RNA sequence: GGGAACGACUCGAGUAGAGUCGAAAAGAUAUGGAAUCGAACUACAGACUGCCACAUCGAUGAAAUAAUAGUAAGGUCGGAAACGACCUUACUAUUAUGGAGAUGUGAUGUCUGCGAUUCCUAAGUCCUAGUAGUGAUUGUUCGCAAUCACUACUAGAAAAGAAACAACAACAACAAC
Reactivity to DMS in 0.01 (KOAc 150mM, MgCl2 10mM, bicine 150mM(pH8.5), 24C), signal-to-noise 5, nucleotides 027 to 126: g010a100u000a300u000g000g010a020a010u000c000g010a100a080c120u030a300c010a020g000a020c010u000g020c160c010a000c000a000u010c000g000a130u000g000a160a140a010u000a010a010u000a010g000u000a010a000g010g030u000c000g010g010a130a100a220c000g010a020c000c000u000u000a000c000u000a000u000u000a000u000g000g000a050g010a010u000g000u010g000a110u000g010u000c000u000g000c010g000a010u000u000c000c000u000a020a100g010u000c030
Reactivity to 2A3 in 0.01 (KOAc 150mM, MgCl2 10mM, bicine 150mM(pH8.5), 24C), signal-to-noise 2, nucleotides 027 to 126: g030a000u170a060u290g010g050a030a000u010c010g000a100a100c130u250a110c300a030g020a010c010u120g280c230c010a000c000a020u000c000g120a210u060g000a110a070a000u000a000a010u000a040g000u020a020a030g000g000u040c090g040g100a210a100a020c000g000a000c000c000u010u000a000c000u020a010u000u030a000u020g000g010a010g000a000u000g000u010g040a010u070g000u000c000u000g010c000g000a010u000u000c020c000u040a160a050g000u010c010
The data come from the RNA Mapping Database (RMDB), library TTRINS. An RNA of 177 nucleotides, treated with DMS and 2A3 and read out base by base. Reactivities are given for positions 27 through 126. For 2A3 the reverse transcriptase was SuperScript II with manganese. The RNA was probed in 150 mM KOAc, 10 mM MgCl2 and 150 mM bicine (pH 8.5) at 24 C. For DMS, 7,311 sequencing reads were counted.